[RMDB]
RNA sequence: GGGAACGACUCGAGUAGAGUCGAAAAGCACCGUUCGCGGUGCGCAGAAUCCUAAGUCACCACGUUGAAAGGACGACAUGCGGCGUAUCGGAAACGAUACUGAAUCGCAACAGCGUCCUGGAGUGGUGAUAUGGAAAUUUACAACGUUCGCGUUGAAUACUUUAGAUACGUUCGCGUAUCUAAAGUAAAAAGAAACAACAACAACAAC
Reactivity to DMS in 0.01 (KOAc 150mM, MgCl2 10mM, bicine 150mM(pH8.5), 24C), signal-to-noise 5, nucleotides 027 to 156: g010c010a020c000c010g030u000u000c250g040c000g040g030u010g010c000g030c080a090g010a120a160u000c010c010u000a080a300g010u000c010a020c000c000a030c010g000u000u010g000a200a210a070g040g000a030c000g010a100c070a300u010g010c030g040g040c070g010u010a010u000c020g010g000a180a100a250c010g010a050u000a010c000u000g030a050a080u000c020g040c000a060a050c040a150g010c020g010u000c010c000u000g010g000a100g020u000g010g010u000g010a000u010a080u010g000g000a040a050a110u000u010u010a120c020a050a060c040g020u000u000c070g000c210g020u000u000g010a150a170
Reactivity to 2A3 in 0.01 (KOAc 150mM, MgCl2 10mM, bicine 150mM(pH8.5), 24C), signal-to-noise 4, nucleotides 027 to 156: g000c000a000c020c000g010u060u100c220g000c020g050g000u030g000c000g000c000a010g140a140a110u020c010c010u060a130a050g020u010c000a010c000c000a010c040g100u200u040g030a040a030a010g000g000a010c010g010a060c030a070u050g010c010g020g000c010g000u000a000u000c000g000g040a050a040a050c020g000a000u000a010c030u100g070a080a100u130c000g000c000a020a030c050a070g080c010g000u000c000c000u000g000g010a020g000u000g000g000u000g010a000u000a000u020g030g050a020a050a040u220u300u170a080c040a060a000c030g080u100u140c280g010c030g160u000u040g030a090a070
An RNA of 207 nucleotides, treated with DMS and 2A3 and read out base by base.
The RNA was probed in 150 mM KOAc, 10 mM MgCl2 and 150 mM bicine (pH 8.5) at 24 C.
The DMS profile rests on 20,228 reads.
The 2A3 profile rests on 4,955 reads.
Reactivities are given for positions 27 through 156.
It was measured as part of the RMDB library RNAMAK.
For DMS the reverse transcriptase was MarathonRT.